[RMDB]
RNA sequence: GGGAACGACUCGAGUAGAGUCGAAAAAUUCUGGGUCUACUUACAGUAUAUAGAAAAACUGUAUAAAGACCUUACAGGACACAUGCUUGACAGUUAUUCUGUCAUGCUAUGUGGUGAUAAUUCUGCUAUUGCUAAUAUUCUUCGGAAUAUUAGCAAUAAAAGAAACAACAACAACAAC
Reactivity to DMS in 0.01 (KOAc 150mM, MgCl2 10mM, bicine 150mM(pH8.5), 24C), signal-to-noise 2, nucleotides 027 to 126: a080u000u010c030u010g020g000g020u010c000u000a140c200u000u000a000c000a030g010u000a030u020a300u010a180g000a090a070a140a060a040c000u000g030u000a010u000a040a150a040g010a010c000c010u000u020a220c060a020g000g010a080c000a010c000a000u000g010c000u000u000g000a010c000a010g020u010u000a150u000u020c010u000g010u000c000a020u010g020c010u010a000u000g010u010g010g000u000g020a070u000a090a050u000u000c010u000g000c300u000
Reactivity to 2A3 in 0.01 (KOAc 150mM, MgCl2 10mM, bicine 150mM(pH8.5), 24C), signal-to-noise 3, nucleotides 027 to 126: a000u120u060c040u060g000g000g020u000c000u020a070c060u060u010a000c000a000g030u010a120u010a040u110a270g210a040a120a020a020a030c000u000g030u050a020u030a020a120a010g010a000c010c010u000u050a000c000a010g030g030a000c000a000c000a000u000g000c000u010u010g020a000c000a020g040u090u120a230u300u180c010u000g010u010c000a000u010g010c010u070a010u010g000u000g000g050u010g030a030u050a190a090u060u010c010u030g050c010u000

This 177-nucleotide RNA was probed chemically with DMS and 2A3. For DMS the reverse transcriptase was MarathonRT. Reactivities are given for positions 27 through 126. For 2A3 the reverse transcriptase was SuperScript II with manganese. The reactions ran in a buffer of 150 mM KOAc, 10 mM MgCl2 and 150 mM bicine (pH 8.5), at 24 C.